[RMDB]
RNA sequence: GGGAACGACUCGAGUAGAGUCGAAAAAUUCAUGUGGAGCCUGGACCUGUACCGGGUUCUCUUUGUGGUGAUAUGACAACUCAUAACCAUUCCUUAUCACCGGGAGACAACCUGGUAUAGGUCCAGCGGUCGAGGUAUAGUUCGCUAUACCUCGACCAAAAGAAACAACAACAACAAC
Reactivity to 2A3 in 0.01 (KOAc 150mM, MgCl2 10mM, bicine 150mM(pH8.5), 24C), signal-to-noise 1, nucleotides 027 to 126: a000u120u130c130a090u180g030u250g200g020a000g000c000c000u010g000g000a000c000c000u000g020u000a000c030c000g000g000g040u020u000c000u000c010u000u000u100g300u260g030g000u000g000a000u000a010u110g110a020c140a070a050c140u060c120a100u120a140a070c070c030a190u110u110c030c030u000u010a020u020c000a000c030c020g000g000g000a000g000a010c120a010a000c000c020u000g010g000u000a000u000a000g000g020u000c000c000a000g000c010
Chemical mapping of a 177-nucleotide RNA with 2A3.
The reactions ran in a buffer of 150 mM KOAc, 10 mM MgCl2 and 150 mM bicine (pH 8.5), at 24 C.
As a SHAPE reagent, 2A3 marks flexible, mostly unpaired nucleotides at the ribose 2'-OH.
For 2A3 the reverse transcriptase was SuperScript II with manganese.
For 2A3, 498 sequencing reads were counted.